Annotation: Conditions: 150 mM KOAc, 10 mM MgCl2 and 150 mM bicine (pH 8.5), 24 C. This 177-nucleotide RNA was probed chemically with 2A3 and DMS.

RNA sequence: GGGAACGACUCGAGUAGAGUCGAAAAUUUCAAUCUGACAACUAAAACCACUCUUUUCAAGCAGAUCGGUGAGCGGCAUGAGGUCGUGAAUACAGGGUUCGCCACCGGUGAUGACAACGUGACGCGCGUCCAUACGGCUAUUCGUAGCCGUAUGGACAAAAGAAACAACAACAACAAC
Reactivity to 2A3 in 0.01 (KOAc 150mM, MgCl2 10mM, bicine 150mM(pH8.5), 24C), signal-to-noise 2, nucleotides 027 to 126: u100u100u010c040a020a030u110c010u030g030a070c090a030a030c090u140a110a040a000a000c030c020a100c010u080c010u020u150u080u080c060a060a060g000c060a090g000a070u010c010g010g010u050g040a050g030c000g070g000c050a090u070g010a000g060g000u020c020g000u000g090a010a000u110a010c000a020g160g050g020u070u040c010g000c000c010a010c000c000g000g010u020g050a040u050g060a050c000a060a010c130g050u040g000a050c040g010c000g010c050
Reactivity to DMS in 0.01 (KOAc 150mM, MgCl2 10mM, bicine 150mM(pH8.5), 24C), signal-to-noise 1, nucleotides 027 to 126: u000u080u000c070a180a160u000c040u000g010a000c050a160a110c110u000a010a220a260a150c090c010a050c030u000c020u000u050u000u000c090a070a200g000c000a040g000a110u000c000g000g010u000g000a010g000c000g030g120c050a080u040g000a050g040g010u060c120g010u010g000a090a000u040a100c000a100g000g020g130u000u000c100g090c010c000a050c000c010g000g000u000g000a070u000g000a150c110a000a040c060g000u000g000a000c040g060c010g060c230
For 2A3 the reverse transcriptase was SuperScript II with manganese. The 2A3 profile rests on 1,232 reads.